[RMDB]
RNA sequence: GGGAACGACUCGAGUAGAGUCGAAAAAUAGAAAGGCUAAGCACCUCGCAAUGACGUAAGGUGGGACUUUUCCUUCUGGAACCAAGCGGUUGGUUCCGAGGGGGGUGUGAUCCAGGUACCGCCGUAGGCGUGAGAAGGUCUUCGGACCUUCUCACGCAAAAGAAACAACAACAACAAC
Reactivity to DMS in 0.01 (KOAc 150mM, MgCl2 10mM, bicine 150mM(pH8.5), 24C), signal-to-noise 2, nucleotides 027 to 126: a110u000a080g010a030a060a080g000g030c040u000a110a160g030c040a060c020c000u000c070g020c050a110a090u030g000a100c160g000u000a090a040g020g020u000g000g030g020a160c020u000u000u010u010c000c020u000u000c020u010g000g030a010a010c000c000a010a030g010c210g030g000u010u010g010g010u000u000c000c010g020a020g000g010g000g000g010g040u000g020u000g010a090u010c060c020a060g010g000u000a030c020c020g010c000c030g000u010a060g040
Reactivity to 2A3 in 0.01 (KOAc 150mM, MgCl2 10mM, bicine 150mM(pH8.5), 24C), signal-to-noise 1, nucleotides 027 to 126: a000u080a010g130a020a040a020g040g030c060u070a040a010g040c050a020c050c010u020c010g050c050a130a300u200g050a050c050g030u070a000a030g010g000u010g040g000g000a020c020u020u020u090u150c020c000u020u020c090u120g010g000a000a010c020c000a030a000g000c060g250g120u050u030g010g010u000u000c000c000g000a050g000g000g020g010g010g000u000g030u010g040a040u050c020c010a010g110g000u010a060c010c010g020c000c040g050u070a080g060
An RNA of 177 nucleotides, treated with DMS and 2A3 and read out base by base. The RNA was probed in 150 mM KOAc, 10 mM MgCl2 and 150 mM bicine (pH 8.5) at 24 C. The DMS profile rests on 1,655 reads. For DMS the reverse transcriptase was MarathonRT. The 2A3 profile rests on 1,082 reads.